Description: An RNA of 177 nucleotides, treated with 2A3 and DMS and read out base by base. For DMS, 1,837 sequencing reads were counted. It was measured as part of the RMDB library RFM100. For 2A3, 1,537 sequencing reads were counted. The reactions ran in a buffer of 150 mM KOAc, 10 mM MgCl2 and 150 mM bicine (pH 8.5), at 24 C. For 2A3 the reverse transcriptase was SuperScript II with manganese.
RNA sequence: GGGAACGACUCGAGUAGAGUCGAAAACCCUUUUCCCCUCUCCUCCUUUCAGCUGCUGUUACUACGUGGAGUUUGGAGCCUAAGCUUUGAAAACUCCCAUGUGGCGCGCCCGUCUUAAGUCUGAGCAGGAAAUAAUAGCCUUCGGGCUAUUAUUUCCAAAAGAAACAACAACAACAAC
Reactivity to 2A3 in 0.01 (KOAc 150mM, MgCl2 10mM, bicine 150mM(pH8.5), 24C), signal-to-noise 2, nucleotides 027 to 126: c010c000c010u000u000u050u000c000c000c000c010u020c000u000c000c000u030c000c030u000u080u040c020a050g010c030u030g010c010u080g060u140u090a060c040u000a020c070g160u250g020g010a030g010u000u030u020g010g000a000g000c000c040u170a180a000g000c050u030u050u070g160a040a030a000a000c000u010c010c010c000a010u040g020u020g030g000c010g010c000g030c000c000c000g070u060c020u020u150a060a030g000u010c040u050g030a030g050c050a050
Reactivity to DMS in 0.01 (KOAc 150mM, MgCl2 10mM, bicine 150mM(pH8.5), 24C), signal-to-noise 1, nucleotides 027 to 126: c010c000c000u000u010u000u000c010c010c010c020u000c030u050c020c020u000c010c040u000u020u040c080a080g000c030u000g030c110u020g000u000u030a090c050u010a140c070g010u020g020g000a020g000u000u000u000g020g070a010g010c020c240u030a100a100g000c000u000u050u010g020a170a030a000a020c000u010c030c000c080a080u000g020u020g040g010c000g030c060g010c050c000c010g020u000c040u000u010a000a030g000u000c010u010g000a160g010c140a210